[RMDB]
RNA sequence: GGGAACGACUCGAGUAGAGUCGAAAAUCAUGCACGUUCGCGUGCAUGAAAAGGCGGCGAGUAUCGCUCAGCGGCGCGCUACAGCGCGCACCGCAGCUGGAAAAAGAUGAAUCUUCGGAUUCAUCAAGAUACACCAAAACUUCGGUUUUGGUGUAUCAAAAGAAACAACAACAACAAC
Reactivity to DMS in 0.01 (KOAc 150mM, MgCl2 10mM, bicine 150mM(pH8.5), 24C), signal-to-noise 3, nucleotides 027 to 126: u000c000a010u010g020c000a010c000g010u010u010c210g020c000g050u010g000c000a000u010g000a000a060a100a120g000g040c030g000g000c050g020a140g020u010a090u000c040g010c010u000c060a130g000c010g000g030c020g020c020g010c020u010a110c300a150g020c170g030c020g020c010a000c080c010g000c010a100g020c050u000g010g000a040a060a080a130a120g000a000u000g000a030a000u010c000u000u010c150g010g000a020u000u000c000a000u000c000a060a050
Reactivity to 2A3 in 0.01 (KOAc 150mM, MgCl2 10mM, bicine 150mM(pH8.5), 24C), signal-to-noise 2, nucleotides 027 to 126: u000c000a000u000g000c010a000c010g010u030u070c220g030c000g110u010g000c010a000u000g000a010a000a010a040g040g000c030g010g010c030g040a080g070u150a100u260c030g030c040u040c090a010g010c000g050g000c010g000c000g010c030u130a220c070a110g030c050g000c000g000c060a010c000c020g000c020a010g000c020u060g050g060a090a100a020a020a010g000a000u000g000a010a000u010c010u050u080c230g080g000a000u010u000c000a000u000c000a010a030
Chemical mapping of a 177-nucleotide RNA with DMS and 2A3. 2A3 adducts were read by reverse transcription with SuperScript II with manganese. The 2A3 profile rests on 3,326 reads. Reactivities are given for positions 27 through 126. DMS (dimethyl sulfate) methylates the pairing face of unpaired adenines and cytosines.